[RMDB]
RNA sequence: GGGAACGACUCGAGUAGAGUCGAAAAGACUGCGUGCACUCGAGACGAUAUCGAGCCGGAAAUUAAUCGAUAAUGUCUCUCGUAGUGGAUACGAUCCGGCAAGUAUCGACUACAUGUGCUCGUAGGACGGAGCAGUAGGUUUCGACCUACUGCUCCGAAAAGAAACAACAACAACAAC
Reactivity to 2A3 in 0.01 (KOAc 150mM, MgCl2 10mM, bicine 150mM(pH8.5), 24C), signal-to-noise 4, nucleotides 027 to 126: g030a010c000u000g000c000g000u010g010c000a000c010u070c060g000a000g010a010c020g020a000u010a010u020c010g000a000g000c000c050g000g070a040a160a150u300u300a100a220u190c000g010a000u010a030a100u140g020u000c020u000c000u000c060g000u020a000g000u030g120g000a000u000a020c000g010a030u020c000c000g000g000c020a040a000g000u000a000u010c040g050a000c000u010a040c010a080u080g010u000g000c000u000c000g010u010a000g010g000a000
Reactivity to DMS in 0.01 (KOAc 150mM, MgCl2 10mM, bicine 150mM(pH8.5), 24C), signal-to-noise 1, nucleotides 027 to 126: g010a300c000u000g080c000g000u010g000c000a000c000u000c230g000a020g000a020c030g020a030u000a000u000c030g000a080g000c000c000g000g000a030a170a140u050u050a020a210u000c010g090a030u030a000a150u000g000u000c000u030c000u030c160g020u000a000g000u000g000g000a000u040a000c000g000a090u050c000c000g030g010c000a220a190g020u000a000u000c010g000a070c000u000a000c030a210u090g000u000g000c000u000c010g110u060a000g030g020a150